[RMDB]
RNA sequence: GGGAACGACUCGAGUAGAGUCGAAAACAGAAUCAAAUAUAGAUUUUAUCUCGUAUUCACAAAUAGUAAAUGAGAGAUCUACUGGCGAAAUGGUAUGUCCCAAUAUUAAUGCAUUUAUUGCUAGUAACGUAAACGCAGAUAUUAUAUGGAGCGGACAGCCUAGCAGUUAUUUCGAUAACUGCUAGGCAAAAGAAACAACAACAACAAC
Reactivity to DMS in 0.01 (KOAc 150mM, MgCl2 10mM, bicine 150mM(pH8.5), 24C), signal-to-noise 1, nucleotides 027 to 156: c020a090g020a040a070u000c030a110a050a160u010a190u010a070g020a080u010u010u000u010a120u030c010u000c020g040u000a090u020u000c030a080c000a300a080a150u000a110g040u000a000a020a050u020g010a090g000a060g000a070u000c050u000a070c040u000g040g020c000g000a000a070a060u000g010g020u020a070u000g000u010c010c010c020a040a060u000a040u000u000a070a180u000g010c020a000u000u000u000a020u010u020g100c000u000a250g000u020a160a010c000g000u010a020a000a010c010g000c020a030g020a070u000a070u000u000a070u010a090u000g000g020a080g020c030g000g000a080c050a110
Reactivity to 2A3 in 0.01 (KOAc 150mM, MgCl2 10mM, bicine 150mM(pH8.5), 24C), signal-to-noise 2, nucleotides 027 to 156: c020a020g060a030a100u170c040a020a090a050u110a000u060a100g010a010u030u020u060u130a050u030c000u000c000g030u080a220u130u160c090a120c070a090a130a070u200a050g070u160a070a080a080u140g000a020g000a000g000a030u000c000u040a010c020u050g080g000c060g030a060a010a000u110g080g010u100a050u060g050u000c000c040c010a020a000u100a030u050u060a080a040u030g000c000a010u030u040u030a090u090u170g000c000u010a040g020u130a030a010c040g010u000a050a030a000c020g000c020a010g060a060u060a010u110u050a030u100a060u100g030g000a070g080c040g000g040a020c000a020
Chemical mapping of a 207-nucleotide RNA with DMS and 2A3. Source: RMDB library OK3TST, as collected in RNAgym. As a SHAPE reagent, 2A3 marks flexible, mostly unpaired nucleotides at the ribose 2'-OH.